Chemical mapping of a 177-nucleotide RNA with 2A3 and DMS. The 2A3 profile rests on 660 reads. 2A3 is a SHAPE reagent: it acylates the 2'-hydroxyl of flexible nucleotides of all four kinds. The DMS profile rests on 690 reads. It was measured as part of the RMDB library OK2TST. Values cover nucleotides 27 to 126. DMS (dimethyl sulfate) methylates the pairing face of unpaired adenines and cytosines.
RNA sequence: GGGAACGACUCGAGUAGAGUCGAAAAACGUCAUGGAAUGACCAUGAACGGCAUGGAGAGGAGAGACCGGUAUUGAUGUCAGUCGCCCCGGCAAGGCAUUCGCCGCAUCAAUGACGGCGGUAUUAUAGACGGAUAUGGCUUUCGAGCCAUAUCCGUCAAAAGAAACAACAACAACAAC
Reactivity to 2A3 in 0.01 (KOAc 150mM, MgCl2 10mM, bicine 150mM(pH8.5), 24C), signal-to-noise 1, nucleotides 027 to 126: a040c010g020u000c010a010u050g030g030a160a300u300g070a150c020c000a000u020g070a130a000c030g070g000c030a070u050g050g000a080g020a060g000g000a010g000a000g030a050c030c000g020g040u010a090u020u120g140a070u020g050u070c040a030g140u050c040g010c000c000c030c000g060g000c010a020a130g020g000c000a020u250u130c110g000c000c000g040c000a000u090c020a010a220u100g100a150c020g000g010c000g030g010u010a020u030u190a090u070a070
Reactivity to DMS in 0.01 (KOAc 150mM, MgCl2 10mM, bicine 150mM(pH8.5), 24C), signal-to-noise 1, nucleotides 027 to 126: a110c070g050u010c000a050u020g000g010a300a130u030g000a140c010c010a010u000g000a050a140c010g020g010c110a070u030g010g010a080g020a080g010g000a120g010a100g010a120c020c010g000g000u010a020u000u000g000a060u020g000u020c070a050g020u010c050g000c090c070c070c070g020g000c060a070a030g030g000c030a100u000u030c110g010c000c020g030c090a030u000c100a030a040u010g010a090c000g010g000c050g040g000u000a010u000u000a080u000a150